[RMDB]
An RNA of 177 nucleotides, treated with 2A3 and DMS and read out base by base. Reactivities are given for positions 27 through 126. Conditions: 150 mM KOAc, 10 mM MgCl2 and 150 mM bicine (pH 8.5), 24 C. DMS adducts were read by reverse transcription with MarathonRT.
RNA sequence: GGGAACGACUCGAGUAGAGUCGAAAAGUCCGCCAUUUUGUUGCUGUGGCUAUUGGGAACAAGCUGGGCAAAAGCACCCCGGAGGCGCGACGCUCCUUCGAGUUCGGUGCCUCGUGUGACGGCGGGGAUAGGUUAAGAUAUUCGUAUCUUAACCUAUAAAAGAAACAACAACAACAAC
Reactivity to 2A3 in 0.01 (KOAc 150mM, MgCl2 10mM, bicine 150mM(pH8.5), 24C), signal-to-noise 6, nucleotides 027 to 126: g060u020c020c010g010c030c010a080u130u140u080u200g120u070u060g030c040u090g070u140g250g000c010u080a190u070u250g060g010g020a060a070c040a070a020g010c010u060g000g040g000c020a050a050a030a000g030c030a040c010c010c000c030g060g010a000g000g010c020g000c020g080a060c090g010c020u000c010c000u090u120c100g040a050g030u060u100c040g030g040u050g010c000c000u020c030g080u110g030u030g040a050c060g010g000c020g000g000g000g010
Reactivity to DMS in 0.01 (KOAc 150mM, MgCl2 10mM, bicine 150mM(pH8.5), 24C), signal-to-noise 9, nucleotides 027 to 126: g020u000c010c030g010c020c010a110u010u000u000u010g010u000u000g010c010u000g020u010g010g010c030u000a110u010u010g010g010g020a110a120c080a050a060g010c030u000g010g000g010c040a030a040a090a120g000c070a080c030c010c020c030g010g000a020g000g010c050g000c010g000a090c270g010c010u000c010c150u000u000c100g000a050g010u000u000c060g010g010u000g020c000c010u000c070g010u000g010u000g010a070c080g000g010c010g000g000g000g000